[RMDB]
RNA sequence: GGGAACGACUCGAGUAGAGUCGAAAAGCUAGCCUGCGCACGAUCUGACUGCCGUGAAGUCUAGCCUGCGUCAGAACUAGUCUCCAUCAAUCAAAGCGCAGGGAUAGAUGUACGAGACUAGUACACAGUGUAAGGAGUAGUUCGCUGCUCUUUACACAAAAGAAACAACAACAACAAC
Reactivity to 2A3 in 0.01 (KOAc 150mM, MgCl2 10mM, bicine 150mM(pH8.5), 24C), signal-to-noise 9, nucleotides 027 to 126: g040c030u040a010g020c000c000u000g000c000g000c000a030c040g050a070u030c020u050g050a040c030u090g030c020c010g050u050g070a100a010g070u030c040u060a030g020c000c010u040g020c020g070u060c040a020g020a060a020c000u000a000g000u000c000u000c000c010a030u050c020a050a070u030c020a060a060a030g000c010g000c010a010g000g010g000a020u050a030g020a010u020g030u070a050c080g000a000g000a000c000u000a000g010u040a020c080a000c020a050
Reactivity to DMS in 0.01 (KOAc 150mM, MgCl2 10mM, bicine 150mM(pH8.5), 24C), signal-to-noise 9, nucleotides 027 to 126: g010c040u010a070g010c010c010u000g010c010g020c010a160c160g010a070u010c030u010g000a050c030u020g030c040c090g010u010g000a090a090g010u020c050u010a090g000c030c010u000g010c060g000u010c070a070g000a070a040c010u000a000g000u000c000u000c010c030a050u010c040a090a050u020c040a050a090a110g010c010g010c010a020g000g010g000a060u010a030g010a040u000g000u040a100c200g000a020g000a020c010u000a010g010u000a070c160a080c180a100
Chemical mapping of a 177-nucleotide RNA with 2A3 and DMS. For 2A3, 128,195 sequencing reads were counted. The reactions ran in a buffer of 150 mM KOAc, 10 mM MgCl2 and 150 mM bicine (pH 8.5), at 24 C. Source: RMDB library OK1LIB, as collected in RNAgym.